The record gives the reactivity of an RNA of 177 nucleotides to DMS and 2A3. For 2A3 the reverse transcriptase was SuperScript II with manganese. The DMS profile rests on 6,015 reads. The reactions ran in a buffer of 150 mM KOAc, 10 mM MgCl2 and 150 mM bicine (pH 8.5), at 24 C.
RNA sequence: GGGAACGACUCGAGUAGAGUCGAAAACGACAGAACUUCGGUUCUGUCGAAAUAAAAUCAGCGGUUAAAAAGCUGGCGUUAUAACGGCUGAACGCCAGCUUAAAAGAUUCGUGUUCGCACGAAUCAACUCAAUACAGUACUUCGGUACUGUAUUGAGAAAAGAAACAACAACAACAAC
Reactivity to DMS in 0.01 (KOAc 150mM, MgCl2 10mM, bicine 150mM(pH8.5), 24C), signal-to-noise 3, nucleotides 027 to 126: c020g000a010c000a010g000a000a000c000u000u010c200g010g010u000u000c000u000g010u000c000g000a000a060a080u000a070a040a100a060u000c060a050g030c050g000g000u010u010a060a090a120a020a020g010c000u000g010g000c010g020u000u000a070u000a090a080c090g010g010c060u000g000a020a010c000g010c000c000a000g010c000u000u000a010a050a080a080g000a010u000u000c000g010u000g000u010u010c240g010c010a000c000g000a010a000u000c000a080a150
Reactivity to 2A3 in 0.01 (KOAc 150mM, MgCl2 10mM, bicine 150mM(pH8.5), 24C), signal-to-noise 5, nucleotides 027 to 126: c000g000a000c010a010g010a010a010c010u050u150c210g070g000u000u000c000u000g010u000c000g010a000a000a000u060a010a070a000a080u100c040a010g030c030g120g090u150u180a120a150a030a000a020g000c000u000g010g000c000g000u020u020a150u040a240a050c070g110g010c090u100g040a000a000c000g000c010c000a000g000c000u000u000a000a000a000a000g010a000u000u000c000g000u010g060u050u050c230g020c060a000c010g000a000a000u000c000a000a010